[RMDB]
RNA sequence: GGGAACGACUCGAGUAGAGUCGAAAAACAUCAUUUCAAAUGCAUCUAGUGGUCUUAUGGAUGUACUGGACAACUGUCCACGUGGCGCGCACUCAUACAAACCGGCUAGGGAUUUGCUAGCAGUUUACUCCGCAAAGAGAUUCGUCUCUUUGCGGAGAAAAGAAACAACAACAACAAC
Reactivity to DMS in 0.01 (KOAc 150mM, MgCl2 10mM, bicine 150mM(pH8.5), 24C), signal-to-noise 1, nucleotides 027 to 126: a010c100a090u000c070a060u010u000u000c070a180a090a120u000g000c070a040u000c020u010a050g050u000g000g000u000c030u000u010a070u000g030g010a030u000g000u010a030c130u000g010g020a020c040a140a080c240u010g010u000c000c000a030c100g000u000g000g020c060g050c120g000c030a060c010u010c020a040u010a070c150a030a080a030c040c040g010g000c000u000a080g000g020g030a060u000u030u000g000c010u000a030g030c030a130g010u000u000u000a160
Reactivity to 2A3 in 0.01 (KOAc 150mM, MgCl2 10mM, bicine 150mM(pH8.5), 24C), signal-to-noise 1, nucleotides 027 to 126: a000c040a070u080c040a060u090u120u210c030a020a070a070u110g010c010a040u010c010u040a040g040u070g140g060u000c020u100u120a020u100g000g000a000u030g030u070a010c030u000g000g010a010c020a220a200c270u240g020u000c000c000a020c100g000u090g000g010c010g000c010g000c000a000c000u000c010a040u040a120c060a010a130a000c000c000g020g100c020u000a010g110g000g090a160u060u100u080g040c010u030a020g000c000a000g020u110u040u020a050